Conditions: 150 mM KOAc, 10 mM MgCl2 and 150 mM bicine (pH 8.5), 24 C.
An RNA of 177 nucleotides, treated with 2A3 and DMS and read out base by base.
For 2A3, 3,105 sequencing reads were counted.
For DMS, 4,246 sequencing reads were counted.
Source: RMDB library OK2TRN, as collected in RNAgym.
RNA sequence: GGGAACGACUCGAGUAGAGUCGAAAAGGGAGCAACUCAGUAGGGCCAGAGAGAAGUUUUGAGUAUUUGGCUCUUACAAUGAUUUUGGCUCCUAGGGGCUCAAAACAGCGCUAGGCUUACUCUGGACCCCCAGAGUAUUAUUCGUAAUACUCUGGGGAAAAGAAACAACAACAACAAC
Reactivity to 2A3 in 0.01 (KOAc 150mM, MgCl2 10mM, bicine 150mM(pH8.5), 24C), signal-to-noise 2, nucleotides 027 to 126: g000g000g010a000g000c000a000a070c030u020c050a060g020u020a000g040g000g000c010c010a000g020a010g020a010g020a140a080g020u100u180u290u230g050a040g040u040a060u020u020u010g020g030c000u020c020u020u020a020c060a100a170u080g030a050u030u060u090u200g140g010c010u000c000c000u000a000g000g000g000g010c010u010c010a040a110a020a040c030a040g020c020g030c110u040a020g090g060c020u040u050a040c000u020c020u030g060g090a100c020
Reactivity to DMS in 0.01 (KOAc 150mM, MgCl2 10mM, bicine 150mM(pH8.5), 24C), signal-to-noise 4, nucleotides 027 to 126: g000g000g000a030g020c010a070a060c300u000c040a080g010u000a040g010g000g010c010c000a010g000a020g000a130g000a150a110g020u000u010u000u000g010a070g010u000a110u000u000u000g000g000c000u000c010u000u010a030c050a160a150u010g000a070u000u000u000u000g000g010c000u000c000c010u010a070g000g000g010g000c050u010c030a020a020a040a040c090a080g010c070g000c060u000a050g010g000c030u000u000a060c080u000c030u010g010g010a300c190